Background
The record gives the reactivity of an RNA of 177 nucleotides to 2A3 and DMS. It was measured as part of the RMDB library OK2TST. The reactions ran in a buffer of 150 mM KOAc, 10 mM MgCl2 and 150 mM bicine (pH 8.5), at 24 C. For DMS, 2,142 sequencing reads were counted.

[RMDB]
RNA sequence: GGGAACGACUCGAGUAGAGUCGAAAAGGUACCAGGCGGCGAGCAGUCGCUCGGAGAACGACAUCAGGGCUUGGCCGCCGUGUUCUCGACCGUGGUGAUGCGCAGGUGGACGAAGCCCAGCUUGCCAUGGGCAAAAUAGGUUCGCCUAUUUUGCCCAAAAAGAAACAACAACAACAAC
Reactivity to 2A3 in 0.01 (KOAc 150mM, MgCl2 10mM, bicine 150mM(pH8.5), 24C), signal-to-noise 1, nucleotides 027 to 126: g020g000u040a070c010c010a040g030g020c060g000g000c000g000a030g000c110a060g010u030c020g010c050u020c030g130g030a160g050a040a020c010g060a020c020a040u190c140a170g000g100g090c010u040u050g240g000c010c000g000c000c000g030u040g010u000u000c050u010c060g130a090c040c050g070u050g060g000u040g000a070u110g000c100g000c160a170g000g000u020g010g020a070c070g080a030a010g010c000c010c010a000g020c010u020u000g000c020c030a060
Reactivity to DMS in 0.01 (KOAc 150mM, MgCl2 10mM, bicine 150mM(pH8.5), 24C), signal-to-noise 2, nucleotides 027 to 126: g010g000u000a110c010c020a230g020g010c090g010g000c000g020a030g030c040a170g010u010c010g030c050u000c040g010g020a140g000a030a050c030g000a030c020a100u010c210a120g000g000g000c010u000u010g000g010c020c010g020c000c020g000u000g010u000u000c060u000c030g000a090c130c110g030u000g000g020u000g010a090u000g010c080g000c050a110g010g060u000g020g010a060c050g020a080a050g010c010c000c020a140g020c030u010u000g020c010c020a130